[RMDB]
RNA sequence: GGGAACGACUCGAGUAGAGUCGAAAAGAUAUGGACCAUUGACCUUCACUUCACAAAGCAUCGAUCAUAAUGUGUCGGAAACGACAUUAUGGGAGCUUUGUGAAGUGAAGGUCACUGGUCCUAAGUCCAUAUAGCGGUCCUUCGGGACCGCUAUAUGAAAAGAAACAACAACAACAAC
Reactivity to DMS in 0.01 (KOAc 150mM, MgCl2 10mM, bicine 150mM(pH8.5), 24C), signal-to-noise 1, nucleotides 027 to 126: g020a130u020a300u020g020g000a020c000c000a000u000u000g000a010c000c000u000u000c040a000c000u000u040c000a010c020a000a000a000g000c000a300u000c180g010a130u010c000a000u000a010a030u000g010u000g020u020c000g030g000a090a110a270c000g020a060c000a010u010u060a030u000g010g010g000a040g000c010u010u000u000g000u000g000a020a000g020u000g000a000a000g010g010u000c020a010c000u000g030g010u010c000c000u010a010a050g010u000c040
The record gives the reactivity of an RNA of 177 nucleotides to DMS. The data come from the RNA Mapping Database (RMDB), library TTRINS. For DMS, 1,305 sequencing reads were counted. DMS adducts were read by reverse transcription with MarathonRT.